Annotation:
This 177-nucleotide RNA was probed chemically with DMS and 2A3. For DMS the reverse transcriptase was MarathonRT.
RNA sequence: GGGAACGACUCGAGUAGAGUCGAAAAGCUGUUGCGGUAGGCGUCGGGUCCGCUGCCGAUACCGCGCAGCGUCCGUCCGUCGUGGUGGAUGUCGACGACCAUCGCGUACGCGGCGGGGGCAGCGGGACCGACUAGGAGUGUUCGCACUCCUAGUCGGAAAAGAAACAACAACAACAAC
Reactivity to DMS in 0.01 (KOAc 150mM, MgCl2 10mM, bicine 150mM(pH8.5), 24C), signal-to-noise 9, nucleotides 027 to 126: g010c000u000g010u000u010g050c010g010g010u000a140g030g020c210g020u000c030g010g010g010u010c020c010g010c010u000g010c010c000g010a100u000a030c010c000g020c010g000c010a020g010c010g010u010c010c000g010u000c010c010g000u000c010g020u000g010g020u000g000g010a080u000g010u010c110g000a100c130g010a140c010c000a010u000c010g010c000g010u010a020c010g010c100g020g000c010g000g000g010g010g010c010a010g010c010g000g000g000a220
Reactivity to 2A3 in 0.01 (KOAc 150mM, MgCl2 10mM, bicine 150mM(pH8.5), 24C), signal-to-noise 9, nucleotides 027 to 126: g010c010u050g020u270u300g020c020g010g030u070a070g120g220c160g120u060c040g050g000g060u030c020c010g010c020u010g000c000c010g030a050u070a060c010c000g000c000g000c010a000g000c000g050u010c000c000g010u010c000c000g000u010c000g010u010g000g030u020g010g030a100u090g120u220c110g080a150c060g030a030c020c010a010u010c000g000c010g030u100a010c010g010c110g010g000c010g010g010g000g050g000c000a010g000c000g010g000g020a020